The record gives the reactivity of an RNA of 207 nucleotides to DMS. The DMS profile rests on 4,084 reads. Reactivities are given for positions 27 through 156. DMS adducts were read by reverse transcription with MarathonRT. Source: RMDB library M2RFPK, as collected in RNAgym. The RNA was probed in 150 mM KOAc, 10 mM MgCl2 and 150 mM bicine (pH 8.5) at 24 C.
RNA sequence: GGGAACGACUCGAGUAGAGUCGAAAAAUGAUCACCCCGUCCGAUGCGGAAGCUCGUGCUUCCGUCGAACGCGAAAGUCGGACGGCGGCCAUGAGUCGCAACGCAAAGCCGCGGCAAGUGGAGUUAGAAAAGCGUUUGAAGUUCGCUUCAAACGCAACUAAAGUAUUGGCUUCGGCCAAUACUUUAGAAAAGAAACAACAACAACAAC
Reactivity to DMS in 0.01 (KOAc 150mM, MgCl2 10mM, bicine 150mM(pH8.5), 24C), signal-to-noise 2, nucleotides 027 to 156: a070u000g010a150u000c080a190c020c010c000c000g000u000c000c010g000a020u000g000c000g040g000a040a020g030c000u000c300g030u000g000c000u000u000c010c010g020u000c030g010a050a140c100g040c110g020a130a120a180g020u000c010g000g010a070c000g000g010c000g000g050c010c000a030u000g010a300g000u000c020g020c000a030a040c020g000c030a180a210a280g030c010c040g020c000g030g020c010a030a300g020u000g000g010a100g000u000u000a150g000a110a060a070a130g020c000g000u000u000u010g000a030a030g030u000u010c300g020c000u010u000c000a010a010a020c000g020c000a000a020